[RMDB]
Conditions: 150 mM KOAc, 10 mM MgCl2 and 150 mM bicine (pH 8.5), 24 C. Structure probing data (2A3 and DMS) for a 207-nucleotide construct. DMS adducts were read by reverse transcription with MarathonRT. The DMS profile rests on 2,560 reads. 2A3 adducts were read by reverse transcription with SuperScript II with manganese. The 2A3 profile rests on 974 reads.
RNA sequence: GGGAACGACUCGAGUAGAGUCGAAAAUGUAAGCAUUUCACCUCAAGAGUAAGGCGGCAACGCAGGAACUGAAAUCACUAGACCGUUUCUGACACCAGCAAUGAAGUAUGUUAUUUAAUUCGGUGACCCACGAAAAACCUUACCACAAUUUGAAUAUUGGAAAGUAUUAGUUCGCUAAUACUUUCCAAAAAGAAACAACAACAACAAC
Reactivity to 2A3 in 0.01 (KOAc 150mM, MgCl2 10mM, bicine 150mM(pH8.5), 24C), signal-to-noise 2, nucleotides 027 to 156: u080g010u040a040a080g040c020a030u000u030u030c020a050c010c030u080c060a040a060g050a040g050u060a030a000g030g030c030g010g010c050a080a000c050g000c020a000g030g000a030a000c010u030g040a070a000a090u120c010a030c110u030a040g050a100c020c020g000u010u010u010c010u020g030a040c020a020c040c020a020g010c000a030a080u060g000a070a020g040u040a070u060g050u070u030a140u080u150u090a080a080u060u030c000g000g000u000g010a040c000c000c010a040c020g000a100a020a010a000a010c010c000u020u000a000c000c040a070c030a030a020u140u150u140g040a060a000u000a060u000
Reactivity to DMS in 0.01 (KOAc 150mM, MgCl2 10mM, bicine 150mM(pH8.5), 24C), signal-to-noise 2, nucleotides 027 to 156: u000g000u000a070a110g020c000a110u000u000u000c050a120c040c040u000c050a050a140g000a100g000u000a000a050g000g000c010g020g010c020a120a110c040g040c040a020g010g000a210a120c030u010g000a080a070a080u010c040a090c050u010a120g010a170c050c070g000u010u000u020c040u000g010a150c030a060c080c040a120g030c070a090a090u000g010a080a150g020u000a020u000g010u000u000a080u000u000u010a010a140u010u000c020g000g020u000g010a110c020c010c020a080c050g010a050a020a090a110a040c010c020u000u010a030c010c000a070c100a080a130u020u010u000g020a030a120u000a200u000